[RMDB]
RNA sequence: GGGAACGACUCGAGUAGAGUCGAAAAGAACUGUUCGCAGUUCAAAGCAUCCUAAGUCUCGUGAGGCCUCCGACAUGUGUGUAUCGGAAACGAUACGAACACAACAGCGGAGGCUACCCACCACGAGAUAUGGAAAAAAGGCUCAUUCGUGAGCCAAUCGAACAGAGAUAUUCGUAUCUCUGUUCGAAAAAGAAACAACAACAACAAC
Reactivity to DMS in 0.01 (KOAc 150mM, MgCl2 10mM, bicine 150mM(pH8.5), 24C), signal-to-noise 2, nucleotides 027 to 156: g000a000a040c010u000g020u000u010c300g050c000a060g030u020u000c020a100a100a200g050c090a160u000c000c030u010a090a270g000u030c000u000c030g030u000g000a190g040g000c000c020u000c000c000g020a050c100a180u010g050u000g000u010g020u020a020u000c020g000g000a160a080a300c000g040a000u030a030c010g020a090a060c010a100c010a050a240c190a160g000c030g000g020a040g000g000c000u010a000c020c040c000a300c040c000a000c000g000a000g040a010u000a080u010g030g000a010a030a080a090a120a160g010g020c000u010c000a100u000u020c230g000u000g000a020g000c020c050a020a090
Reactivity to 2A3 in 0.01 (KOAc 150mM, MgCl2 10mM, bicine 150mM(pH8.5), 24C), signal-to-noise 3, nucleotides 027 to 156: g010a010a010c010u030g030u140u160c270g000c150a010g000u020u010c040a120a050a010g120c030a100u030c000c000u040a130a020g030u000c000u000c020g010u000g000a010g020g000c010c010u000c010c030g180a240c090a170u040g000u000g020u010g000u010a040u020c010g050g040a090a080a030c000g000a000u000a010c010g090a150a010c020a000c010a050a170c070a050g090c020g000g000a000g000g010c000u000a000c000c000c000a050c010c010a000c000g000a000g000a000u010a010u000g010g000a070a000a000a100a030a120g030g030c060u050c000a060u120u170c210g080u020g010a000g000c000c000a000a050
About this RNA:
Conditions: 150 mM KOAc, 10 mM MgCl2 and 150 mM bicine (pH 8.5), 24 C. The record gives the reactivity of an RNA of 207 nucleotides to DMS and 2A3. The DMS profile rests on 2,584 reads.